[RMDB]
RNA sequence: GGGAACGACUCGAGUAGAGUCGAAAAAGCAACGAGUGUGUGUGGGACGUUUUAUCCCAAGCUCUGAGUAGAGCACGCGCUCACAGACACCGCGAGCGAGCAUCAGCAGAGCGCAAACGCUGGUAAACGCAUAUUCACCUUUCGAGGUGAAUAUGCGAAAAGAAACAACAACAACAAC
Reactivity to 2A3 in 0.01 (KOAc 150mM, MgCl2 10mM, bicine 150mM(pH8.5), 24C), signal-to-noise 2, nucleotides 027 to 126: a000g030c010a020a040c020g050a050g070u030g010u000g000u030g000u020g040g000g060a040c020g030u020u030u050u230a130u110c060c010c020a040a000g000c000u000c000u040g280a240g120u300a000g090a010g000c020a000c060g010c020g020c010u000c010a020c000a000g010a000c040a010c050c000g040c030g040a010g000c000g000a000g020c030a080u100c020a020g020c010a000g020a070g140c070g000c080a170a060a010c050g010c000u020g030g000u060a030a070a040
Reactivity to DMS in 0.01 (KOAc 150mM, MgCl2 10mM, bicine 150mM(pH8.5), 24C), signal-to-noise 2, nucleotides 027 to 126: a100g000c070a140a080c030g010a280g000u000g010u010g010u000g010u000g000g010g010a060c050g010u000u030u020u000a160u000c020c030c050a060a060g000c010u000c010u000g020a170g050u010a060g010a010g010c010a070c080g010c050g000c000u000c010a030c000a040g000a040c040a030c040c020g040c010g000a150g000c010g000a080g020c100a050u000c010a050g000c040a060g000a140g020c090g020c110a050a110a100c170g030c010u000g010g010u000a060a080a170

An RNA of 177 nucleotides, treated with 2A3 and DMS and read out base by base. Conditions: 150 mM KOAc, 10 mM MgCl2 and 150 mM bicine (pH 8.5), 24 C. It was measured as part of the RMDB library M2PK90. For 2A3 the reverse transcriptase was SuperScript II with manganese.